This 177-nucleotide RNA was probed chemically with DMS and 2A3.

[RMDB]
RNA sequence: GGGAACGACUCGAGUAGAGUCGAAAAUGUUUCUGUCGUUCUUAGUAUAGCAUAUUUAUAAUGCGCUUACAUUUUCUUGCCAUGAAGAUAACAAUAUAUUGCUAAGAGUAAUUUCAUAAGAGAAUGCUAAGCAACGUAAAUUCGUUUACGUUGCUUAAAAAGAAACAACAACAACAAC
Reactivity to DMS in 0.01 (KOAc 150mM, MgCl2 10mM, bicine 150mM(pH8.5), 24C), signal-to-noise 6, nucleotides 027 to 126: u010g000u010u000u010c010u000g010u000c030g010u000u000c000u000u000a060g030u010a080u020a100g010c020a020u000a070u010u020u020a100u020a130a040u010g000c020g000c100u000u010a120c050a040u000u000u010u000c000u000u010g020c180c190a050u010g000a050a050g010a090u010a040a070c110a040a080u020a090u010a070u010u010g000c060u000a050a080g000a110g010u010a050a060u010u000u000c040a060u010a020a040g010a040g000a020a030u000g010c210
Reactivity to 2A3 in 0.01 (KOAc 150mM, MgCl2 10mM, bicine 150mM(pH8.5), 24C), signal-to-noise 9, nucleotides 027 to 126: u090g010u000u010u000c020u030g050u030c030g010u030u000c010u020u050a070g020u070a090u080a090g010c030a020u070a060u110u190u060a240u180a190a020u040g000c030g010c040u040u070a020c010a070u050u040u030u010c020u030u050g080c060c010a050u060g030a050a050g050a120u140a130a030c040a150a010u100a030u030a040u180u140g010c020u070a090a010g040a020g090u030a030a060u060u050u040c030a030u030a150a020g020a000g010a050a020u030g020c040